[RMDB]
Chemical mapping of a 177-nucleotide RNA with 2A3.
Values cover nucleotides 27 to 126.
For 2A3, 325 sequencing reads were counted.
The reactions ran in a buffer of 150 mM KOAc, 10 mM MgCl2 and 150 mM bicine (pH 8.5), at 24 C.
For 2A3 the reverse transcriptase was SuperScript II with manganese.
The data come from the RNA Mapping Database (RMDB), library OK1LIB.
RNA sequence: GGGAACGACUCGAGUAGAGUCGAAAAGGUCCAGCUGGACAAGCAGAACCGGACAGAGCCCAUUACAAUAUUGUAACCUUUUGUUGCAAGUGUGACUCUACGCUUCGGUUGUGCGUACAAAGCACACGACUAAGGGCGGCUUCGGCCGCCCUUAGUCAAAAGAAACAACAACAACAAC
Reactivity to 2A3 in 0.01 (KOAc 150mM, MgCl2 10mM, bicine 150mM(pH8.5), 24C), signal-to-noise 1, nucleotides 027 to 126: g010g020u170c000c000a000g010c020u030g000g110a010c000a030a000g130c010a000g000a000a000c000c000g000g000a000c020a000g080a070g020c010c240c000a020u040u190a010c150a080a220u090a100u160u000g010u000a000a000c030c030u000u140u250u300g100u000u000g000c020a160a160g000u000g060u000g090a160c000u000c000u000a030c060g030c030u000u070c000g010g000u000u000g050u050g250c000g010u060a000c130a010a090a000g070c000a000c080a080c170